This 207-nucleotide RNA was probed chemically with 2A3 and DMS. Conditions: 150 mM KOAc, 10 mM MgCl2 and 150 mM bicine (pH 8.5), 24 C. It was measured as part of the RMDB library M2RFPK. Reactivities are rounded to 0.1 and cut off at 0 and 3.
[RMDB]
RNA sequence: GGGAACGACUCGAGUAGAGUCGAAAAACUCCUAUUCCAACACGUCCUCGUCGUACAGAGUGGUAACAUGUGUCACCACAUAUCCAAGCUUGGGUACACGGGCUUGACCCAAACCCUUGGGCGGAUGAAAACCAGAUUACGUUCGCGUAAUCUGGAACGAAUAGCAAUGGUUCGCCAUUGCUAUUCGAAAAGAAACAACAACAACAAC
Reactivity to 2A3 in 0.01 (KOAc 150mM, MgCl2 10mM, bicine 150mM(pH8.5), 24C), signal-to-noise 5, nucleotides 027 to 156: a010c060u050c040c000u050a090u080u080c050c020a060a030c030a030c070g070u070c010c030u060c040g100u030c020g030u100a080c050a050g110a030g070u030g000g040u080a080a030c060a130u190g080u070g050u130c030a020c050c000a050c020a070u140a020u030c010c010a010a020g020c020u010u010g010g000g000u060a040c050a040c080g010g000g020c020u150u290g180a300c000c000c000a020a030a030c000c000c000u010u000g000g000g000c000g000g000a000u020g030a020a020a010a030c000c000a000g000a000u000u010a010c010g010u020u060c200g000c010g070u000a000a000u000c000u000g000g000a000a020
Reactivity to DMS in 0.01 (KOAc 150mM, MgCl2 10mM, bicine 150mM(pH8.5), 24C), signal-to-noise 3, nucleotides 027 to 156: a030c080u000c030c020u000a080u000u000c030c030a060a080c070a120c060g010u000c010c000u000c050g050u000c050g030u000a130c070a120g020a150g000u010g020g010u000a020a020c020a130u010g040u010g010u010c020a040c000c010a030c020a120u010a090u020c030c010a040a300g020c040u000u000g010g010g010u000a090c070a100c160g030g050g020c030u000u010g010a120c020c000c000a040a080a080c000c010c000u010u000g000g120g020c300g000g000a060u000g010a090a060a090a180c010c000a010g010a010u000u000a000c000g020u010u000c300g050c030g030u000a010a010u000c000u010g000g010a010a020